[RMDB]
RNA sequence: GGGAACGACUCGAGUAGAGUCGAAAAGGGCGGGCAUAAGUCCCGCUCCCGCAAACCUUCCGGUAGGAACAACGCCCCCCUCCGUCGGAAGGAACUCGGGCGGUGAAGUCCCCCAGCUUCACCGCCCCGUCGCAGUAUAGUUCGCUAUACUGCGACGAAAAGAAACAACAACAACAAC
Reactivity to DMS in 0.01 (KOAc 150mM, MgCl2 10mM, bicine 150mM(pH8.5), 24C), signal-to-noise 2, nucleotides 027 to 126: g020g030g010c020g000g020g000c080a120u060a210a260g000u010c020c000c020g020c000u000c020c000c040g010c190a090a130a200c000c000u010u000c000c010g030g010u000a110g000g000a070a110c270a140a090c070g000c010c010c000c000c000c010u020c000c000g000u000c000g000g000a030a030g010g070a090a040c150u040c140g000g000g010c000g000g000u000g030a010a000g020u000c080c030c000c000c000a200g000c000u000u000c010a000c000c010g000c000c020c000
Reactivity to 2A3 in 0.01 (KOAc 150mM, MgCl2 10mM, bicine 150mM(pH8.5), 24C), signal-to-noise 5, nucleotides 027 to 126: g030g010g000c040g010g010g000c070a170u150a300a050g080u220c010c000c000g000c000u000c000c000c020g010c050a070a070a120c000c010u000u010c000c000g040g020u120a270g250g030a090a070c120a130a080c120g050c000c000c000c000c000c000u000c000c010g010u010c000g000g010a000a000g010g010a010a000c020u030c020g000g000g000c000g000g000u010g000a000a010g080u120c020c010c000c000c000a000g000c000u010u000c000a000c000c000g000c000c000c000

The record gives the reactivity of an RNA of 177 nucleotides to DMS and 2A3. Conditions: 150 mM KOAc, 10 mM MgCl2 and 150 mM bicine (pH 8.5), 24 C. DMS adducts were read by reverse transcription with MarathonRT.